Structure probing data (DMS and 2A3) for a 207-nucleotide construct. The DMS profile rests on 2,066 reads. Values are in units of 0.01, from 0 to 300, in steps of 10. For 2A3, 1,244 sequencing reads were counted. The reactions ran in a buffer of 150 mM KOAc, 10 mM MgCl2 and 150 mM bicine (pH 8.5), at 24 C.
[RMDB]
RNA sequence: GGGAACGACUCGAGUAGAGUCGAAAACUCAAUCACUACGGUGAUUGAGAAUGCUUACGCCUCAAUGAAGCUUGAUUAGAGUGCCUCGAGCAGAUAUAGACUGAAACAUUUAGUAUGGUCAAGCAGGGAGCAACAGCUCGAGUACGCUCGAGCUGAACUAAUCCUCGAGUUUCGACUCGAGGAUUAGAAAAGAAACAACAACAACAAC
Reactivity to DMS in 0.01 (KOAc 150mM, MgCl2 10mM, bicine 150mM(pH8.5), 24C), signal-to-noise 1, nucleotides 027 to 156: c030u000c000a040a010u000c000a000c020u010a070c300g120g000u000g010a000u000u030g010a040g070a040a050u000g040c050u000u020a060c040g010c030c020u010c050a080a080u000g010a140a110g000c010u000u010g060a060u000u000a120g010a180g000u010g000c020c040u010c040g000a110g000c060a160g010a130u030a170u000a160g010a110c010u030g000a180a050a030c100a070u010u010u000a130g020u010a070u000g040g020u030c040a040a070g040c040a180g000g020g010a060g030c040a070a080c020a070g030c030u010c000g030a030g000u020a090c300g030c000u010c000g030a020g020c000u000g010a010a050
Reactivity to 2A3 in 0.01 (KOAc 150mM, MgCl2 10mM, bicine 150mM(pH8.5), 24C), signal-to-noise 3, nucleotides 027 to 156: c000u000c010a000a000u020c000a000c010u060a010c250g110g010u000g000a000u000u000g000a000g060a000a030u070g020c020u020u040a060c080g040c000c020u020c050a070a300u210g110a170a050g020c060u030u020g000a040u040u160a080g050a020g070u060g000c010c020u110c120g030a100g010c000a020g100a010u190a020u050a130g070a010c040u090g070a070a130a000c020a020u120u120u060a060g050u020a060u100g030g000u000c010a030a020g040c010a020g010g000g030a050g010c020a020a100c000a020g010c010u000c000g000a000g020u010a040c220g010c050u000c020g000a000g000c000u000g000a020a000